[RMDB]
RNA sequence: GGGAACGACUCGAGUAGAGUCGAAAAAAGGACUGGUUCGCCAGUCCUUAUUCUUUCGUACGCAACGAAGCGUAAGUCAUUACGCAAAUGACUAAAAGCGUAUACGAAAGGACUUCGGUCCUUUCAACUCCUUAGUAGUCUUCGGACUACUAAGGAGAAAAGAAACAACAACAACAAC
Reactivity to DMS in 0.01 (KOAc 150mM, MgCl2 10mM, bicine 150mM(pH8.5), 24C), signal-to-noise 4, nucleotides 027 to 126: a010a000g010g010a010c010u000g000g000u010u010c240g030c010c000a000g020u000c000c000u000u000a000u000u000c000u010u000u010c130g000u000a020c020g020c010a150a060c110g010a100a140g020c030g000u000a020a020g010u010c300a090u000u000a020c060g000c060a070a070a060u010g010a090c170u010a050a060a100a110g000c010g000u000a050u000a070c150g000a010a010a000g010g000a010c020u000u000c200g030g000u000c000c000u000u000u000c000a100a160
Reactivity to 2A3 in 0.01 (KOAc 150mM, MgCl2 10mM, bicine 150mM(pH8.5), 24C), signal-to-noise 2, nucleotides 027 to 126: a000a000g020g000a010c010u010g010g010u050u060c120g030c060c000a000g000u000c000c000u000u010a000u010u000c000u010u020u010c020g020u010a000c010g000c050a130a030c110g110a130a070g000c010g040u030a000a040g080u110c080a170u010u030a010c020g000c060a050a060a130u140g060a050c060u160a000a000a010a140g010c020g030u040a040u020a060c100g030a010a000a000g000g000a000c010u030u030c210g110g000u000c000c000u000u000u010c010a010a040
Structure probing data (DMS and 2A3) for a 177-nucleotide construct. DMS adducts were read by reverse transcription with MarathonRT. Source: RMDB library M2PK50, as collected in RNAgym. High DMS reactivity at an A or C suggests that its Watson-Crick edge is free.